[RMDB]
RNA sequence: GGGAACGACUCGAGUAGAGUCGAAAAGAUAUGGACAACUGAAUAGCGAAGAACAGUCGUUGUCGGAAACGACAACGAGCUGGGAGCUGCGUUGUCCUAAGUCAAAACCGCAGCUUCGGCUGCGGAAGGAUUCUAGGUUGUUCGCAACCUAGAAUCCAAAAGAAACAACAACAACAAC
Reactivity to 2A3 in 0.01 (KOAc 150mM, MgCl2 10mM, bicine 150mM(pH8.5), 24C), signal-to-noise 2, nucleotides 027 to 126: g030a020u020a020u100g000g000a030c010a010a010c030u250g090a300a270u170a300g000c060g100a300a130g180a300a070c000a010g010u010c000g000u030u000g000u010c000g000g000a010a010a000c000g010a000c010a000a000c000g010a040g050c010u000g040g020g070a070g000c020u010g030c040g000u010u000g000u000c020c000u000a040a000g010u010c000a020a000a070a170c010c010g000c010a000g030c000u030u300c300g200g000c000u000g000c000g000g000a000a000
Reactivity to DMS in 0.01 (KOAc 150mM, MgCl2 10mM, bicine 150mM(pH8.5), 24C), signal-to-noise 1, nucleotides 027 to 126: g010a060u000a130u000g010g020a040c010a020a020c000u020g070a080a110u010a000g000c030g030a160a130g000a150a150c000a000g040u000c000g000u010u000g020u000c000g000g000a020a030a080c000g010a020c010a010a030c020g000a070g070c010u000g000g010g030a150g010c000u000g000c160g000u000u000g010u010c000c000u000a010a040g000u000c010a150a100a080a190c000c000g010c020a010g000c000u000u010c300g030g000c010u000g070c020g000g010a010a020
An RNA of 177 nucleotides, treated with 2A3 and DMS and read out base by base. For DMS the reverse transcriptase was MarathonRT. It was measured as part of the RMDB library TTRDES. For 2A3 the reverse transcriptase was SuperScript II with manganese. For 2A3, 1,982 sequencing reads were counted. For DMS, 1,162 sequencing reads were counted.